Chemical mapping of a 177-nucleotide RNA with DMS and 2A3.
RNA sequence: GGGAACGACUCGAGUAGAGUCGAAAAAGCCAUCGCCAUACGUGGCGAUGGCAUUCCCGGGCAGCUUUUGUGAUUUAGCAAUUGUGACUUUUGCAAAUUGCAUAGUCACAAAAGUGAUCGGGGAGAAAUAGAUAUUACGUUUCGACGUAAUAUCUAUAAAAGAAACAACAACAACAAC
Reactivity to DMS in 0.01 (KOAc 150mM, MgCl2 10mM, bicine 150mM(pH8.5), 24C), signal-to-noise 8, nucleotides 027 to 126: a060g020c000c000a010u000c000g040c000c000a050u010a080c220g030u010g020g020c000g020a000u000g010g030c010a000u010u000c000c000c000g010g020g010c120a210g010c010u000u000u000u000g010u000g000a020u000u000u000a300g010c000a010a020u000u000g010u000g010a120c220u020u020u030u020g010c010a030a030a050u000u000g010c000a240u000a020g000u000c000a000c000a000a000a010a010g010u000g000a120u020c020g000g000g000g000a070g000a090a100
Reactivity to 2A3 in 0.01 (KOAc 150mM, MgCl2 10mM, bicine 150mM(pH8.5), 24C), signal-to-noise 5, nucleotides 027 to 126: a000g000c000c000a000u010c010g020c000c010a050u060a090c240g090u020g000g010c000g000a000u000g000g020c000a000u000u010c000c000c000g000g020g000c060a020g000c000u030u010u000u000g000u010g010a010u030u060u180a050g000c010a010a010u010u030g100u060g200a300c120u200u220u200u300g010c020a060a110a240u020u010g000c010a060u040a050g010u000c000a000c000a000a000a000a000g010u030g010a060u050c000g010g000g010g020a050g060a020a170
It was measured as part of the RMDB libraries RFM100 and RFMREP.
The RNA was probed in 150 mM KOAc, 10 mM MgCl2 and 150 mM bicine (pH 8.5) at 24 C.